This 177-nucleotide RNA was probed chemically with 2A3 and DMS. 2A3 adducts were read by reverse transcription with SuperScript II with manganese. It was measured as part of the RMDB library OK2TRN.
RNA sequence: GGGAACGACUCGAGUAGAGUCGAAAAAUUGUCUGGUCUGUUUACGUAAUUUUAAACGAUCUUGUGGCAUUGUAAUUGCAUGUUGAUCUACGAUACAGAAAUAACAAUCAUAGUCAUUUUGCACAUCGUGUCACUUCCAUUUCGAUGGAAGUGACACAAAAGAAACAACAACAACAAC
Reactivity to 2A3 in 0.01 (KOAc 150mM, MgCl2 10mM, bicine 150mM(pH8.5), 24C), signal-to-noise 1, nucleotides 027 to 126: a000u040u050g000u040c040u050g060g040u010c010u020g040u040u000u020a010c040g010u030a050a150u010u070u060u170a010a080a040c030g000a020u020c000u040u120g100u040g050g000c020a020u080u000g020u140a090a220u140u030g010c000a000u010g030u200u040g030a030u000c000u020a020c050g020a000u040a120c060a020g160a090a100a050u210a120a020c050a000a060u080c020a100u030a070g030u000c020a080u100u140u140u080g010c060a030c000a100u080c090
Reactivity to DMS in 0.01 (KOAc 150mM, MgCl2 10mM, bicine 150mM(pH8.5), 24C), signal-to-noise 1, nucleotides 027 to 126: a030u000u000g040u000c050u000g010g010u000c000u020g000u000u000u000a080c260g000u040a100a030u020u040u010u000a020a040a010c100g010a000u050c000u000u010g030u020g000g000c020a050u020u000g060u000a110a160u000u010g000c020a030u000g010u000u030g010a030u010c030u010a020c050g000a050u010a100c210a130g000a050a030a030u000a150a070c070a080a030u000c030a070u000a040g030u000c010a070u000u000u020u000g000c050a060c300a120u050c160